Conditions: 150 mM KOAc, 10 mM MgCl2 and 150 mM bicine (pH 8.5), 24 C. An RNA of 177 nucleotides, treated with DMS and 2A3 and read out base by base. 2A3 adducts were read by reverse transcription with SuperScript II with manganese.
[RMDB]
RNA sequence: GGGAACGACUCGAGUAGAGUCGAAAAGGGCGCUAGUUCGCUAGCGCCCAAACAACACUACACUCUUCAGUAGUGAUAAUAAAUAAUCUGAACAGUACAUAAAAAGACUCUCGUUCGCGAGAGUCAAGUAUAUCUUACGCUUCGGCGUAAGAUAUACAAAAGAAACAACAACAACAAC
Reactivity to DMS in 0.01 (KOAc 150mM, MgCl2 10mM, bicine 150mM(pH8.5), 24C), signal-to-noise 1, nucleotides 027 to 126: g020g030g040c000g090c000u020a010g060u000u040c150g010c020u000a020g000c000g010c010c020c010a000a020a050c100a030a140c050a020c080u010a020c030a130c100u000c210u000u000c160a100g030u000a070g020u000g000a060u000a090a070u010a060a080a020u000a140a070u030c090u000g010a090a070c150a050g040u010a120c210a090u020a020a090a020a100a170g000a020c000u000c000u000c000g030u000u000c130g030c000g000a010g000a000g020u000c000a000a040
Reactivity to 2A3 in 0.01 (KOAc 150mM, MgCl2 10mM, bicine 150mM(pH8.5), 24C), signal-to-noise 2, nucleotides 027 to 126: g000g010g020c030g030c000u040a010g040u020u010c100g010c130u020a000g000c040g040c030c000c000a000a000a000c000a010a010c000a010c000u070a010c060a010c020u100c020u200u230c110a050g000u010a000g000u010g040a030u090a150a040u060a020a100a000u110a080a110u060c060u000g070a040a040c030a050g080u160a020c020a080u200a140a130a020a040a040g010a000c000u010c000u000c000g040u080u090c250g010c010g050a000g000a010g000u010c000a000a000
Source: RMDB library M2PK50, as collected in RNAgym.
Reactivities are rounded to 0.1 and cut off at 0 and 3.
The DMS profile rests on 850 reads.
For DMS the reverse transcriptase was MarathonRT.